Overview:
This 177-nucleotide RNA was probed chemically with DMS.
RNA sequence: GGGAACGACUCGAGUAGAGUCGAAAACCGUAGAUGUUCGCAUCUACGGAAAUAAACUUGACAAAAGCCGCGUCAACAAAAAGCGGCAAAAAGAACAAACAAAAAUCCAUGUCUUCGGACAUGGAAACUCCUUAGAUAUCUUCGGAUAUCUAAGGAGAAAAGAAACAACAACAACAAC
Reactivity to DMS in 0.01 (KOAc 150mM, MgCl2 10mM, bicine 150mM(pH8.5), 24C), signal-to-noise 1, nucleotides 027 to 126: c010c000g000u000a010g020a030u030g010u000u010c190g030c030a010u000c000u000a000c000g000g000a030a050a060u020a110a030a080c070u000u000g000a040c040a140a070a180a180g000c000c000g040c000g030u000c040a030a180c140a090a070a050a050a040g010c000g000g010c000a000a030a070a050a090g000a050a100c180a020a100a110c150a020a130a090a120a080u000c000c000a020u000g000u000c000u000u010c110g020g010a050c000a030u020g000g000a020a040a010
The DMS profile rests on 1,202 reads.
The reactions ran in a buffer of 150 mM KOAc, 10 mM MgCl2 and 150 mM bicine (pH 8.5), at 24 C.
It was measured as part of the RMDB library M2PK50.
Values cover nucleotides 27 to 126.